[RMDB]
RNA sequence: GGGAACGACUCGAGUAGAGUCGAAAAGAGGAUCUUUCUAAAUGGUCCAUCAGCUCUCCACGGAAUCAGCAAGAGCACUACACAGUUAGCAGUCAACCCUCCUGCAUAGGUUAUGUAACACAGUCUGCAGAUAUGAUGAGCAAGAAGCUGAACACCAUACCCUAAGUCUGUUCGCAGACUUAGGGUAAAAAGAAACAACAACAACAAC
Reactivity to DMS in 0.01 (KOAc 150mM, MgCl2 10mM, bicine 150mM(pH8.5), 24C), signal-to-noise 1, nucleotides 027 to 156: g000a160g030g040a050u010c010u000u000u000c100u020a070a120a140u000g000g030u000c000c020a160u000c030a040g030c010u000c000u010c050c060a120c080g020g020a160a100u000c030a060g000c020a030a030g000a120g010c030a150c010u000a050c010a080c050a150g020u000u000a090g020c020a130g020u000c020a030a100c070c020c010u010c010c010u010g030c010a080u000a080g020g020u010u000a080u000g050u000a080a150c050a090c080a080g000u010c040u010g030c000a100g020a160u000a080u000g030a090u020g010a140g060c050a020a080g020a030a100g050c050u000g020a040a110c030a030c020c030a180
Reactivity to 2A3 in 0.01 (KOAc 150mM, MgCl2 10mM, bicine 150mM(pH8.5), 24C), signal-to-noise 2, nucleotides 027 to 156: g070a020g000g010a010u010c000u010u180u060c100u300a220a180a170u170g040g000u020c030c010a100u020c010a040g020c000u040c000u010c070c030a020c070g130g000a110a070u170c010a040g040c000a090a030g010a000g060c010a010c040u160a080c080a020c000a070g010u080u170a010g040c030a040g000u080c010a070a170c010c000c000u050c030c020u030g050c030a040u060a050g020g020u100u120a040u250g110u220a100a000c040a000c000a060g020u020c040u060g050c020a020g010a010u080a000u100g080a010u050g000a010g030c050a080a070g000a020a020g000c010u010g010a000a000c030a020c070c000a020
The record gives the reactivity of an RNA of 207 nucleotides to DMS and 2A3. The DMS profile rests on 1,736 reads. The reactions ran in a buffer of 150 mM KOAc, 10 mM MgCl2 and 150 mM bicine (pH 8.5), at 24 C. 2A3 adducts were read by reverse transcription with SuperScript II with manganese. DMS adducts were read by reverse transcription with MarathonRT.